[RMDB]
RNA sequence: GGGAACGACUCGAGUAGAGUCGAAAAUUAAAGCGCGAAAAAGAUCGAUCGAUCGUUUGAACGCGCAAGUCGAAGUUUGAUACGGGCAUACUAGCUAGGUAGCUAGCAAAACAAACUUCGUAAAAAAACUGUCUGAUAGUUUCGACUAUCAGACAGUAAAAGAAACAACAACAACAAC
Reactivity to 2A3 in 0.01 (KOAc 150mM, MgCl2 10mM, bicine 150mM(pH8.5), 24C), signal-to-noise 1, nucleotides 027 to 126: u120u050a050a090a000g040c010g010c010g100a050a000a020a000a000g030a000u020c030g060a110u120c160g000a010u000c040g100u030u080u140g060a150a050c000g000c000g000c000a000a000g050u030c000g010a040a000g010u000u000u020g140a150u150a170c130g090g000g050c050a030u120a120c040u000a010g020c010u010a070g080g300u100a010g040c000u010a000g020c040a000a150a000a030c000a000a000a030c000u010u020c000g000u050a000a070a000a000a000a000
Reactivity to DMS in 0.01 (KOAc 150mM, MgCl2 10mM, bicine 150mM(pH8.5), 24C), signal-to-noise 2, nucleotides 027 to 126: u000u000a050a120a210g010c000g010c010g010a030a100a050a050a070g000a000u000c000g010a160u020c160g000a000u000c000g010u000u000u000g030a150a150c000g010c000g010c020a040a050g000u000c010g000a000a040g010u010u000u000g000a110u020a120c170g000g010g030c150a180u010a120c030u000a030g010c020u000a180g010g010u010a070g000c000u000a020g020c030a030a080a100a120c010a000a010a000c000u000u000c010g020u000a010a000a070a040a090a030